This 177-nucleotide RNA was probed chemically with DMS and 2A3. For DMS, 5,079 sequencing reads were counted. For 2A3, 3,594 sequencing reads were counted. 2A3 adducts were read by reverse transcription with SuperScript II with manganese. The reactions ran in a buffer of 150 mM KOAc, 10 mM MgCl2 and 150 mM bicine (pH 8.5), at 24 C.

[RMDB]
RNA sequence: GGGAACGACUCGAGUAGAGUCGAAAAGCGAACGUCUCCGGCGCACCGUUAAUGUUAACCGCGCUGGCACUGUUGUUCUCCAACUCCUAUGGCGGCAUGGUUACUCACUAUGGCGGCGCGGCAGGUCAUUGUCUAUUGCUUUCGAGCAAUAGACAAUAAAAGAAACAACAACAACAAC
Reactivity to DMS in 0.01 (KOAc 150mM, MgCl2 10mM, bicine 150mM(pH8.5), 24C), signal-to-noise 4, nucleotides 027 to 126: g020c070g010a070a070c090g010u010c060u000c020c030g020g010c000g000c020a080c060c080g020u000u010a060a140u010g010u010u000a050a060c010c040g020c040g000c000u000g010g020c140a040c100u010g010u000u000g000u000u000c130u010c120c080a070a100c060u000c040c020u000a120u010g010g010c020g000g000c030a040u010g010g000u000u010a040c170u010c050a060c090u010a080u010g010g010c000g000g010c030g010c040g010g010c060a050g020g010u000c140
Reactivity to 2A3 in 0.01 (KOAc 150mM, MgCl2 10mM, bicine 150mM(pH8.5), 24C), signal-to-noise 2, nucleotides 027 to 126: g020c010g030a030a020c010g040u010c030u000c060c010g050g000c000g010c000a060c050c040g010u010u070a130a040u300g050u150u080a010a020c000c000g000c000g000c010u020g060g050c040a020c060u070g000u080u030g010u020u020c050u010c050c010a000a050c020u010c020c020u070a110u150g100g000c000g000g010c010a000u030g030g000u020u040a050c020u020c080a030c040u110a060u150g090g010c020g000g000c020g000c000g020g000c060a060g010g070u050c040